[RMDB]
RNA sequence: GGGAACGACUCGAGUAGAGUCGAAAAUCAUCAAGAAGUAGGCUUAGGCCAAUUGCUUGGUGGUGAAAGUACAGGGAAGGUAGCACUUCGACGCCUCUAAGUACGCUGUGGGAGUAGUGCUUAAAUCAAAAGCACAGCGACUUCGGUCGCUGUGCAAGAAGAAUACCUUCUUCGGAAGGUAUUCUUCAAAAGAAACAACAACAACAAC
Reactivity to 2A3 in 0.01 (KOAc 150mM, MgCl2 10mM, bicine 150mM(pH8.5), 24C), signal-to-noise 4, nucleotides 027 to 156: u010c000a000u000c000a010a000g010a080a030g040u070a030g030g020c030u100u100a080g170g000c000c000a040a060u030u030g030c010u010u000g000g020u000g000g010u010g020a090a060a000g090u110a040c070a030g010g030g090a070a040g070g010u060a020g030c020a010c020u040u030c100g080a060c040g040c020c010u050c050u070a060a040g040u030a040c060g010c100u050g010u110g030g040g030a030g030u080a010g010u020g010c010u040u080a040a100a060u130c080a070a050a010a010g010c000a000c000a000g000c000g000a000c000u020u050c130g060g010u000c000g000c000u000g000u000g030c000a010a000
Reactivity to DMS in 0.01 (KOAc 150mM, MgCl2 10mM, bicine 150mM(pH8.5), 24C), signal-to-noise 2, nucleotides 027 to 156: u010c010a030u000c020a050a030g030a060a030g030u000a100g010g020c010u010u010a200g110g020c020c000a070a080u000u000g010c030u000u040g020g050u010g020g010u000g010a110a060a100g010u000a070c080a110g000g020g000a100a030g010g020u010a100g010c080a110c040u000u000c010g030a120c030g010c020c000u000c050u000a100a140g000u000a040c050g010c010u000g000u010g020g020g000a150g000u000a050g030u000g040c010u000u000a040a070a140u010c110a080a060a100a170g020c000a010c000a000g050c020g000a030c000u000u000c300g050g010u010c010g000c000u000g000u010g000c000a000a000
This 207-nucleotide RNA was probed chemically with 2A3 and DMS. DMS (dimethyl sulfate) methylates the pairing face of unpaired adenines and cytosines. For 2A3 the reverse transcriptase was SuperScript II with manganese. For DMS the reverse transcriptase was MarathonRT. The RNA was probed in 150 mM KOAc, 10 mM MgCl2 and 150 mM bicine (pH 8.5) at 24 C. For DMS, 3,598 sequencing reads were counted.